[RMDB]
RNA sequence: GGGAACGACUCGAGUAGAGUCGAAAAAUGUGAUUUCAAACGAUUUGACUUUGGAUUUGAUGUUGAGAACAACCCACUAUCAGUACUUAAUAGAUCGGUACAUCACUUCGGUCAGUUUAAUAUCGACGAAGUUGCCUCUAUUCGUAGAGGCAACUUCAAAAGAAACAACAACAACAAC
Reactivity to DMS in 0.01 (KOAc 150mM, MgCl2 10mM, bicine 150mM(pH8.5), 24C), signal-to-noise 1, nucleotides 027 to 126: a100u020g050u000g000a050u000u000u010c020a000a050a010c130g000a130u000u000u000g000a100c160u000u000u010g000g070a020u000u100u000g020a050u000g000u070u000g040a080g030a050a260c150a030a130c050c060c110a120c070u000a070u210c170a110g070u080a050c030u070u000a000a000u000a000g040a050u000c090g000g000u000a010c080a090u010c110a010c080u050u000c000g020g000u000c000a060g000u030u000u060a030a070u000a090u000c090g000a180c150
Reactivity to 2A3 in 0.01 (KOAc 150mM, MgCl2 10mM, bicine 150mM(pH8.5), 24C), signal-to-noise 3, nucleotides 027 to 126: a000u200g060u040g030a180u000u050u050c060a030a060a020c080g020a040u110u010u150g070a120c010u050u050u130g170g070a040u040u030u040g050a040u080g030u030u240g160a120g060a050a090c020a060a060c020c000c000a000c040u020a070u100c020a030g080u140a160c150u130u210a100a000u060a070g200a110u150c100g010g000u040a000c000a010u000c030a000c000u030u000c000g150g000u070c070a010g000u010u020u080a130a080u180a050u200c010g000a010c070
An RNA of 177 nucleotides, treated with DMS and 2A3 and read out base by base. Conditions: 150 mM KOAc, 10 mM MgCl2 and 150 mM bicine (pH 8.5), 24 C. 2A3 adducts were read by reverse transcription with SuperScript II with manganese.